The data come from the RNA Mapping Database (RMDB), library M2RFPK. An RNA of 207 nucleotides, treated with 2A3 and read out base by base. For 2A3, 437 sequencing reads were counted. The reactions ran in a buffer of 150 mM KOAc, 10 mM MgCl2 and 150 mM bicine (pH 8.5), at 24 C.
RNA sequence: GGGAACGACUCGAGUAGAGUCGAAAAGUGUAGCGUCACUUUGAUGGCGGUACUAUGAAUUGACGCAAGGUGUGGAGCGACCUUAAACAGUUCUGGUGGUGCUCUGAAUGGAGUGCUCUACUGAGAUUUAACUUAUGCACGUUCGCGUGCAUAAGAACUCGUGGUUCUUGUUCGCAAGAACCACGAGAAAAGAAACAACAACAACAAC
Reactivity to 2A3 in 0.01 (KOAc 150mM, MgCl2 10mM, bicine 150mM(pH8.5), 24C), signal-to-noise 1, nucleotides 027 to 156: g130u050g000u130a010g070c030g000u010c000a030c120u150u090u170g260a260u070g030g000c000g000g140u060a030c000u000a000u100g020a110a240u080u080g000a100c020g020c080a040a000g000g000u000g000u050g050g020a020g000c020g030a020c020c000u260u240a120a130a030c010a020g000u000u000c000u080g010g010u040g020g020u020g020c060u030c000u190g090a110a070u300g020g000a010g010u020g030c030u000c030u140a060c000u000g030a100g090a300u000u060u090a110a000c000u000u000a000u000g000c010a000c000g000u010u010c260g050c000g050u000g020c000a000u000a000a000g000a000a000
2A3 adducts were read by reverse transcription with SuperScript II with manganese.
Reactivities are given for positions 27 through 156.